[RMDB]
Notes: The record gives the reactivity of an RNA of 177 nucleotides to DMS and 2A3.
RNA sequence: GGGAACGACUCGAGUAGAGUCGAAAAAGGACGGCAACGUCAGCGCGUUCCGAGACGCAACGGUCGCCGACGAUAAAAUCGUAUCGAUUGAAAUCAGCGGCUCGGGGCCAUGGGAGGAUACCGGAGAACUAGACCCAGAUUUCGAUCUGGGUCUAGUAAAAGAAACAACAACAACAAC
Reactivity to DMS in 0.01 (KOAc 150mM, MgCl2 10mM, bicine 150mM(pH8.5), 24C), signal-to-noise 3, nucleotides 027 to 126: a110g000g020a110c020g020g000c200a070a120c040g000u000c050a170g010c140g040c110g010u030u000c000c010g030a030g000a000c040g000c000a220a160c080g020g000u000c020g040c120c090g010a030c010g000a020u020a110a090a060a300u000c010g010u030a070u050c020g000a010u000u000g000a070a170a100u000c120a060g000c080g020g000c040u040c030g010g000g020g000c010c040a050u030g010g000g010a100g030g000a090u000a100c030c040g010g000a050g000a080
Reactivity to 2A3 in 0.01 (KOAc 150mM, MgCl2 10mM, bicine 150mM(pH8.5), 24C), signal-to-noise 3, nucleotides 027 to 126: a000g110g020a020c020g040g010c060a090a020c080g090u030c040a020g000c000g020c060g040u050u000c000c000g000a000g010a010c020g010c020a060a040c040g040g000u000c010g000c130c020g040a040c010g000a000u120a080a220a040a140u060c020g000u070a080u050c030g020a010u010u080g020a120a070a050u170c080a100g000c000g000g000c000u000c000g020g000g000g000c020c000a040u090g030g000g010a090g000g030a040u050a150c000c000g000g030a100g020a050

The RNA was probed in 150 mM KOAc, 10 mM MgCl2 and 150 mM bicine (pH 8.5) at 24 C.
For DMS, 3,675 sequencing reads were counted.
Values are in units of 0.01, from 0 to 300, in steps of 10.
Source: RMDB library RFM100, as collected in RNAgym.
DMS adducts were read by reverse transcription with MarathonRT.